Structure probing data (DMS) for a 177-nucleotide construct.

RNA sequence: GGGAACGACUCGAGUAGAGUCGAAAAGAUAUGGACCGGAAGCGAGCCUAAGACAGCUAAUCGGAAACGAUUAGUCGAGGACCCUCGAUAACGGUCCUAAGUCAAAAGACCUACUUCGGUAGGUCAACGGUCUUAUUGUCUUCGGACAAUAAGACCGAAAAGAAACAACAACAACAAC
Reactivity to DMS in 0.01 (KOAc 150mM, MgCl2 10mM, bicine 150mM(pH8.5), 24C), signal-to-noise 1, nucleotides 027 to 126: g010a030u000a280u000g000g000a120c000c000g050g010a200a250g000c030g010a040g080c080c000u000a090a130g010a150c300a130g000c070u000a000a020u000c010g020g020a210a050a170c000g000a000u030u000a000g000u000c000g000a080g000g030a080c150c250c030u000c000g000a080u000a100a110c080g010g010u000c000c000u000a000a110g100u000c000a100a010a100a160g000a000c000c000u000a060c000u010u000c150g050g000u000a000g000g000u000c000a080a040
Source information
It was measured as part of the RMDB library TTRDEL. For DMS, 573 sequencing reads were counted.